[RMDB]
RNA sequence: GGGAACGACUCGAGUAGAGUCGAAAAUUCUAGUUUAGCAAAUAUAUAUUUAGCUCCUGCUGUUUGCUAAGCACUGUUUUGGUGGGUUAAAGAUAUCCAUGUUGCCUAUCAAAUUUGUAGAUCAUAUACAAUUGAAUCUUACUAAUGUCUUAAUAAAGAUGGUGGAUAUAUUCGUAUAUCCACCAUCAAAAGAAACAACAACAACAAC
Reactivity to 2A3 in 0.01 (KOAc 150mM, MgCl2 10mM, bicine 150mM(pH8.5), 24C), signal-to-noise 1, nucleotides 027 to 156: u070u050c010u000a030g000u000u000u030a000g000c010a040a010a010u020a050u060a050u050a160u300u120u110a060g010c000u070c110c080u130g030c030u040g010u020u000u030g000c000u000a000a000g000c020a020c080u060g090u070u050u000u050g020g000u010g060g030g000u040u200a000a050a100g050a160u140a040u100c060c020a040u100g070u040u050g020c000c000u000a020u040c000a060a080a060u020u060u090g020u030a000g010a060u060c020a010u070a010u010a130c030a100a020u030u020g040a110a080u080c080u090u010a110c040u050a040a040u090g060u100c020u040u290a220a200u090a080a110a070
Reactivity to DMS in 0.01 (KOAc 150mM, MgCl2 10mM, bicine 150mM(pH8.5), 24C), signal-to-noise 1, nucleotides 027 to 156: u010u000c060u010a170g030u000u000u000a040g010c000a010a030a040u000a090u000a210u010a160u010u010u000a150g050c040u000c180c090u020g020c060u000g000u000u000u000g010c010u000a040a090g000c070a130c100u000g010u010u000u000u010g000g050u010g010g010g000u010u000a060a120a140g010a130u000a020u010c020c040a140u010g030u000u000g020c020c010u000a200u000c010a060a070a130u000u000u000g010u000a040g020a060u000c010a120u000a140u000a200c090a070a080u000u000g010a090a100u000c010u010u000a140c010u000a020a080u010g000u000c010u000u010a020a150u000a100a200a220
Source: RMDB library OK3TST, as collected in RNAgym. An RNA of 207 nucleotides, treated with 2A3 and DMS and read out base by base. DMS adducts were read by reverse transcription with MarathonRT. For 2A3, 620 sequencing reads were counted.